An RNA of 177 nucleotides, treated with 2A3 and DMS and read out base by base. Values cover nucleotides 27 to 126.
RNA sequence: GGGAACGACUCGAGUAGAGUCGAAAACUCGAAAGAGACCUGCAUAUCUUAGGCAGAUGAGCAAGUCACGUCUGAAAAGCGAAAGCCCUAAGAUAUGCAGCUGUGAUGACUUGGCGCAGAAAAUAAAAUUUAGUAUCAGCUUCGGCUGAUACUAAAUAAAAGAAACAACAACAACAAC
Reactivity to 2A3 in 0.01 (KOAc 150mM, MgCl2 10mM, bicine 150mM(pH8.5), 24C), signal-to-noise 6, nucleotides 027 to 126: c000u010c010g020a020a040a010g080a010g030a060c000c000u000g010c000a000u000a000u000c000u000u010a000g000g010c000a000g000a020u010g010a010g040c000a010a000g000u000c000a000c030g010u000c010u010g100a240a230a120a030g020c020g080a090a010a000g000c000c000c000u000a000a000g010a000u000a000u000g000c000a000g010c000u000g000u000g000a020u070g000a000c000u000u010g010g020c000g000c010a000g160a020a100a010a010u270a020a120a040
Reactivity to DMS in 0.01 (KOAc 150mM, MgCl2 10mM, bicine 150mM(pH8.5), 24C), signal-to-noise 3, nucleotides 027 to 126: c010u020c010g020a120a120a130g000a050g000a100c210c000u010g000c000a000u000a010u000c000u000u000a010g020g010c060a010g000a010u000g010a050g000c000a000a000g000u000c000a290c030g010u000c000u000g000a200a090a100a200g010c000g010a130a110a100g020c010c020c010u010a010a000g000a030u000a000u020g000c000a000g010c010u000g010u000g000a020u010g000a020c000u000u000g030g000c000g000c020a060g010a140a070a060a110u020a040a090a060
Source: RMDB library OK1LIB, as collected in RNAgym. The 2A3 profile rests on 10,336 reads.